[RMDB]
RNA sequence: GGGAACGACUCGAGUAGAGUCGAAAAAACUAGGACUUCAUAAAUUAUUUGCAGUACGUAUGGUUCUGACACCCUUGAGAACAGAAUUUUCAGCAUGUUUCCAAGGAACCUCAGUCUUUAGCACACGUUUCUUGCUGAGUGCUAUGGAAAAAGAAAAUAUGACGAUGAUGUUCGCAUCAUCGUCAUAAAAAGAAACAACAACAACAAC
Reactivity to 2A3 in 0.01 (KOAc 150mM, MgCl2 10mM, bicine 150mM(pH8.5), 24C), signal-to-noise 2, nucleotides 027 to 156: a000a000c070u070a050g000g050a040c010u070u020c110a080u110a200a150a210u270u110a300u090u150u130g000c070a030g030u090a010c020g050u080a060u170g050g000u060u000c010u000g050a010c030a100c070c000c000u040u030g120a120g010a180a000c010a020g060a120a180u090u110u090u160c050a010g010c020a030u060g030u090u090u050c010c030a000a000g010g000a050a020c000c000u100c020a010g040u000c000u020u100u020a000g000c000a000c020a000c080g050u040u080u010c060u040u200g020c060u030g050a010g060u000g010c000u000a020u010g000g070a120a000a020a040a020g120a030a080a010a090